Structure probing data (DMS and 2A3) for a 207-nucleotide construct. The DMS profile rests on 1,818 reads. It was measured as part of the RMDB library OK3TST. DMS adducts were read by reverse transcription with MarathonRT. The reactions ran in a buffer of 150 mM KOAc, 10 mM MgCl2 and 150 mM bicine (pH 8.5), at 24 C. For 2A3, 968 sequencing reads were counted. High DMS reactivity at an A or C suggests that its Watson-Crick edge is free.
RNA sequence: GGGAACGACUCGAGUAGAGUCGAAAAAGUCUGGUGGGAGUACUACAGGAGGCCCGCAGUGACAGCCAGUUACACGGGGAUGAACCCGGAAGGCACCGGUUCGCUGACCGAUCACGAUCAGCUCUGGCAGUCUGUGACAAAAAUCCUCACCACGCCAUAAGUGUUACACAUUCGUGUGUAACACUUAAAAAGAAACAACAACAACAAC
Reactivity to DMS in 0.01 (KOAc 150mM, MgCl2 10mM, bicine 150mM(pH8.5), 24C), signal-to-noise 1, nucleotides 027 to 156: a040g020u020c030u010g060g000u000g040g000g010a180g020u000a100c040u010a130c020a080g000g000a200g040g040c040c050c040g030c070a130g020u000g040a070c070a130g000c100c050a020g020u000u020a070c030a100c060g020g000g000g010a160u020g020a060a140c000c000c000g050g010a180a040g020g040c070a070c010c040g040g010u000u000c040g000c010u000g000a070c000c030g010a190u010c180a100c130g010a070u010c000a050g010c010u010c000u000g000g040c000a090g040u010c000u000g000u050g000a220c100a030a080a060a100a210u000c010c050u030c030a050c040c020a050c040g020c000c010a160
Reactivity to 2A3 in 0.01 (KOAc 150mM, MgCl2 10mM, bicine 150mM(pH8.5), 24C), signal-to-noise 2, nucleotides 027 to 156: a000g090u060c060u040g020g000u020g010g010g030a130g030u090a040c060u040a020c040a020g050g020a010g040g100c030c040c050g010c070a090g010u040g040a010c010a040g030c000c000a000g060u030u070a070c140a010c030g070g000g050g000a200u210g060a090a100c040c000c000g020g070a040a100g050g000c040a030c010c040g020g030u090u100c050g050c060u040g000a000c000c070g050a090u170c060a030c190g020a060u010c020a010g020c040u040c010u050g020g000c010a020g060u060c020u030g030u010g040a010c070a010a100a020a000a020u040c010c010u070c010a040c010c000a020c030g050c010c020a030